[RMDB]
RNA sequence: GGGAACGACUCGAGUAGAGUCGAAAAUGCAGACGGAAUGGGGUAUCUACGAGCUCAAGUACUUCUUCACCAACUCGGUGAGCGGCGCUGGAUCGAGCGGUUCACGAUACUCCAAAGAAGCGGUAAAGGAUGAUACCAAGUUCGCUUGGUAUCAUCCAAAAGAAACAACAACAACAAC
Reactivity to DMS in 0.01 (KOAc 150mM, MgCl2 10mM, bicine 150mM(pH8.5), 24C), signal-to-noise 3, nucleotides 027 to 126: u010g000c070a040g040a180c130g000g020a160a150u020g010g020g020g010u000a000u000c010u000a150c190g000a180g000c020u000c020a080a050g000u000a040c000u000u000c030u010u000c000a030c000c010a110a170c250u010c170g010g010u020g010a010g010c220g030g020c020g020c010u010g000g010a130u000c150g010a040g000c020g000g010u000u010c070a150c130g020a040u000a020c020u000c000c020a000a040a050g000a150a110g010c050g010g000u020a060a110a120
Reactivity to 2A3 in 0.01 (KOAc 150mM, MgCl2 10mM, bicine 150mM(pH8.5), 24C), signal-to-noise 2, nucleotides 027 to 126: u080g030c010a020g100a140c040g050g000a080a080u020g000g020g000g000u000a000u000c000u040a030c140g000a030g020c020u010c010a010a010g030u020a020c020u080u000c000u090u110c000a010c000c020a200a300c130u120c200g030g000u020g010a000g000c030g040g000c000g000c000u090g020g080a210u200c080g000a010g040c030g020g010u070u070c010a010c010g010a000u010a000c000u000c000c000a000a000a000g000a030a000g060c020g060g050u130a110a110a000
Notes: Structure probing data (DMS and 2A3) for a 177-nucleotide construct. Values cover nucleotides 27 to 126. The reactions ran in a buffer of 150 mM KOAc, 10 mM MgCl2 and 150 mM bicine (pH 8.5), at 24 C. Source: RMDB library OK2TRN, as collected in RNAgym.